[RMDB]
RNA sequence: GGGAACGACUCGAGUAGAGUCGAAAAGUAAAGCGCGCCGUGAGUGCCUGACGCCAUAUGCCCUGGCCCCAAAUGCCGUGAUUCCAACUUCGCUGGCACUUUUGUGCUGUGUUAGGUCGGCUAAUGCAAGUAACUAGCUAUUCGUAGCUAGUUACUUAAAAGAAACAACAACAACAAC
Reactivity to DMS in 0.01 (KOAc 150mM, MgCl2 10mM, bicine 150mM(pH8.5), 24C), signal-to-noise 9, nucleotides 027 to 126: g010u000a070a110a120g010c070g010c060g020c020c030g000u010g010a110g020u000g010c030c030u010g010a090c100g000c030c050a070u000a090u000g010c030c020c020u000g010g010c030c010c020c050a050a080a100u000g010c010c020g010u010g000a130u000u010c040c050a080a090c070u000u000c090g010c040u010g000g000c010a020c020u000u000u000u010g030u000g020c010u000g010u010g010u000u000a040g010g010u000c050g010g000c070u010a070a090u010g000c150
Reactivity to 2A3 in 0.01 (KOAc 150mM, MgCl2 10mM, bicine 150mM(pH8.5), 24C), signal-to-noise 6, nucleotides 027 to 126: g050u050a030a130a020g060c050g010c010g010c040c040g120u090g060a090g040u070g030c010c020u030g020a030c030g000c010c010a060u080a060u220g010c010c010c000u020g050g010c010c010c000c010a040a100a030u130g000c010c000g010u040g050a130u150u040c030c010a020a020c040u060u040c040g020c060u060g000g090c010a010c020u200u180u160u300g020u020g000c020u030g010u010g030u160u040a030g020g020u050c010g030g000c030u050a100a040u160g060c020

An RNA of 177 nucleotides, treated with DMS and 2A3 and read out base by base.
For 2A3 the reverse transcriptase was SuperScript II with manganese.
The DMS profile rests on 25,958 reads.